Chemical mapping of a 207-nucleotide RNA with DMS and 2A3. Conditions: 150 mM KOAc, 10 mM MgCl2 and 150 mM bicine (pH 8.5), 24 C. The 2A3 profile rests on 1,461 reads. The data come from the RNA Mapping Database (RMDB), library M2RFPK.

[RMDB]
RNA sequence: GGGAACGACUCGAGUAGAGUCGAAAACAUUGUUCUGAUCAUCUGAAGAUCAGCUAUUAGAAGAGAAAGAUCAGUUAAGUCCUUUGGACCUGAUCAGCUUGAUACAAGUACUACUGAUUUCAACUUCAAAACGGGUGCUACUUCGGUAGCACCCGAACAUAGCUGAAGAGUUCGCUCUUCAGCUAUGAAAAGAAACAACAACAACAAC
Reactivity to DMS in 0.01 (KOAc 150mM, MgCl2 10mM, bicine 150mM(pH8.5), 24C), signal-to-noise 1, nucleotides 027 to 156: c120a110u010u000g000u000u010c030u030g000a100u010c020a160u000c090u000g020a260a290g010a010u000c000a050g000c190u010a130u000u000a110g000a080a100g020a080g010a130a130a030g000a020u000c010a010g010u000u000a110a100g010u000c040c120u000u000u000g030g030a010c000c040u020g020a120u000c080a080g010c040u000u000g000a220u000a120c100a050a080g010u000a060c090u000a150c030u000g010a060u000u000u020c020a080a220c030u010u000c040a020a050a100a090c030g000g050g050u000g030c010u010a020c020u010u000c250g040g020u000a010g040c000a010c000c010c000g050a020a040
Reactivity to 2A3 in 0.01 (KOAc 150mM, MgCl2 10mM, bicine 150mM(pH8.5), 24C), signal-to-noise 3, nucleotides 027 to 156: c030a050u140u200g070u270u120c000u010g000a000u000c010a000u030c070u180g150a200a080g000a050u010c000a000g000c010u120a140u300u120a060g010a040a000g030a000g040a030a080a020g010a020u000c000a000g010u030u180a110a000g000u020c000c010u070u090u260g060g000a080c010c020u100g040a190u060c030a010g080c010u060u100g010a040u110a190c050a020a010g030u000a010c030u010a000c000u020g010a040u010u040u070c040a070a070c010u060u030c030a000a030a080a120c050g000g020g000u030g020c010u000a000c000u010u060c170g030g000u010a000g020c010a000c010c000c000g000a000a000